The record gives the reactivity of an RNA of 170 nucleotides to 2A3 and DMS. It was measured as part of the RMDB library 15KLIB. For DMS the reverse transcriptase was MarathonRT.
[RMDB]
RNA sequence: GGGAACGACUCGAGUAGAGUCGAAAACAGAGGGCCGUAUGACACCAUACUGCCAUGAUCCUACUGUUUUGCCUGGGGCUUUUGCGUACAGUCAGAUGAGGCCUCAUGUUCGUUACGACUUGUAUGAAAACCUCUAUGUUCGCAUAGAGGAAAAGAAACAACAACAACAAC
Reactivity to 2A3 in 0.01 (KOAc 150mM, MgCl2 10mM, bicine 150mM(pH8.5), 24C), signal-to-noise 8, nucleotides 027 to 129: c000a010g030a030g020g000g000c000c020g010u010a000u010g070a110c040a040c190c000a010u000a010c000u010g000c000c000a030u090g040a040u100c030c020u040a210c000u020g030u020u020u040u040g040c000c020u020g000g000g020g000c030u000u060u070u150g060c040g030u060a110c030a120g050u120c050a040g050a240u090g040a080g010g020c020c000u030c030a060u100g070u020u080c100g040u060u140a030c040g030a030c040u050u130g030u050a080u050g110a030a030a030a030
Reactivity to DMS in 0.01 (KOAc 150mM, MgCl2 10mM, bicine 150mM(pH8.5), 24C), signal-to-noise 6, nucleotides 027 to 129: c000a040g030a070g020g020g040c040c100g000u000a050u000g000a040c220a210c300c050a000u000a070c000u010g040c000c080a090u000g000a120u000c150c030u000a050c030u020g000u010u030u020u000g050c000c000u040g060g000g040g040c140u000u020u010u030g040c100g000u000a010c100a100g000u030c000a120g030a130u040g030a090g010g010c060c070u050c030a010u060g030u030u010c060g000u000u000a110c130g020a080c130u000u000g030u000a020u040g000a090a070a080a110